[RMDB]
RNA sequence: GGGAACGACUCGAGUAGAGUCGAAAAAGACUUGGACGCAAAAGUACGCAGGCGCAUGGAGCGUUCGAUGACCUGCACGCGAGGUUCAGCACGGAUGAGUAGCCUUGAACUGCAAUCAGCAGUAAGAGGUUAUCCCCAUGAACACAUGGUGGCAAAACAGGGUUCUUUGAUUCGUCAAAGAACCCUGAAAAGAAACAACAACAACAAC
Reactivity to 2A3 in 0.01 (KOAc 150mM, MgCl2 10mM, bicine 150mM(pH8.5), 24C), signal-to-noise 1, nucleotides 027 to 156: a000g050a040c070u040u050g020g020a030c030g000c060a000a030a190a140g040u030a070c030g000c030a070g030g040c110g000c200a080u110g020g030a070g030c030g040u090u000c020g010a010u050g020a050c000c050u030g010c050a020c030g070c030g110a070g060g000u080u060c080a030g100c070a010c050g000g020a040u030g040a040g090u040a010g020c000c050u010u000g000a050a050c000u020g000c000a050a300u240c050a210g010c000a000g000u010a010a010g020a000g000g000u010u010a010u060c000c000c060c020a060u040g040a080a020c130a000c020a160u160g000g020u050g060g000c020a010a000a010a120

Structure probing data (2A3) for a 207-nucleotide construct. It was measured as part of the RMDB library OK3TST. The reactions ran in a buffer of 150 mM KOAc, 10 mM MgCl2 and 150 mM bicine (pH 8.5), at 24 C.